[RMDB]
Chemical mapping of a 207-nucleotide RNA with DMS and 2A3. For 2A3 the reverse transcriptase was SuperScript II with manganese. It was measured as part of the RMDB library OK3TST.
RNA sequence: GGGAACGACUCGAGUAGAGUCGAAAAAUGUUGCUGAACCUUCAGCACCAAGUGUCCGUGAUGAGUGUUGAGCUGUAGGUGAUUGGAGCCUUACUCUAUGGCAGUCAGAUUCGUUCAUUCAUUAACUCAUUUAUUCAACAGUUAUUUAAAGAAUACCAAUCCAUGUUAGUUUCGACUAACAUGGAUUAAAAGAAACAACAACAACAAC
Reactivity to DMS in 0.01 (KOAc 150mM, MgCl2 10mM, bicine 150mM(pH8.5), 24C), signal-to-noise 4, nucleotides 027 to 156: a090u010g000u000u000g010c010u000g010a080a140c050c060u000u000c050a100g000c020a080c040c040a060a100g030u010g030u000c000c030g010u000g010a110u010g000a070g030u010g050u000u000g000a130g030c050u000g040u000a090g040g020u000g000a130u000u000g010g010a120g020c050c050u000u000a080c040u000c020u000a080u010g010g000c030a070g020u000c060a110g010a180u010u000c040g030u000u000c050a110u000u000c030a060u000u010a030a050c040u000c030a070u010u000u000a130u040u000c060a080a110c060a070g010u000u000a060u000u000u000a060a070a110g010a080a060u000a110c060c060
Reactivity to 2A3 in 0.01 (KOAc 150mM, MgCl2 10mM, bicine 150mM(pH8.5), 24C), signal-to-noise 6, nucleotides 027 to 156: a000u070g010u030u010g010c010u020g030a140a240c030c050u130u050c020a010g010c000a010c020c010a060a060g070u020g060u070c040c060g040u060g020a080u030g000a030g040u060g050u090u090g050a050g000c040u020g040u080a020g030g030u040g030a080u060u120g050g010a040g000c000c000u030u060a020c010u000c030u100a060u040g080g000c030a020g010u060c020a000g040a150u060u070c040g050u050u040c020a020u090u010c020a040u070u130a060a040c020u020c040a060u100u100u170a130u140u130c030a050a040c010a070g040u050u080a100u120u110u100a140a150a020g080a030a020u150a100c080c020
The reactions ran in a buffer of 150 mM KOAc, 10 mM MgCl2 and 150 mM bicine (pH 8.5), at 24 C.